Notes:
Chemical mapping of a 170-nucleotide RNA with DMS and 2A3. The data come from the RNA Mapping Database (RMDB), library 15KLIB. The reactions ran in a buffer of 150 mM KOAc, 10 mM MgCl2 and 150 mM bicine (pH 8.5), at 24 C. Reactivities are given for positions 27 through 129.
RNA sequence: GGGAACGACUCGAGUAGAGUCGAAAAGUUAUGUUUGAAGAUGCCCAAGGUUUGAAAAAGUUCUACAAAGAAGUUAGAGCUUACCUAGGAAUCUCUUCUGCUUGUGACGGUCUUGCUUCAGCUUAUACAACAAUCUGCUUCGGCAGAUUGAAAAGAAACAACAACAACAAC
Reactivity to DMS in 0.01 (KOAc 150mM, MgCl2 10mM, bicine 150mM(pH8.5), 24C), signal-to-noise 6, nucleotides 027 to 129: g000u020u040a080u040g000u030u030u030g000a040a020g000a000u040g020c140c010c010a110a060g030g010u020u040u090g040a050a060a060a060a040g080u000u000c020u030a090c060a060a150a130g040a130a170g030u000u000a020g010a000g040c030u060u000a040c010c010u010a130g000g000a220a070u020c000u030c000u050u000c000u000g030c140u020u000g030u020g000a100c180g000g000u000c030u030u040g020c070u010u020c090a060g000c090u040u030a070u050a080c190a130a120
Reactivity to 2A3 in 0.01 (KOAc 150mM, MgCl2 10mM, bicine 150mM(pH8.5), 24C), signal-to-noise 7, nucleotides 027 to 129: g010u030u030a120u180g090u060u090u090g040a010a000g010a000u070g020c010c000c000a030a010g050g010u050u170u300g140a040a020a000a000a010g010u000u000c010u000a020c060a080a190a060g180a150a040g130u110u070a010g010a000g010c000u000u010a020c000c000u010a020g000g050a050a050u040c030u000c000u070u020c000u050g010c040u090u070g030u040g040a010c020g060g010u030c020u030u090g010c000u050u040c010a040g020c020u070u080a110u080a160c130a160a010
2A3 adducts were read by reverse transcription with SuperScript II with manganese.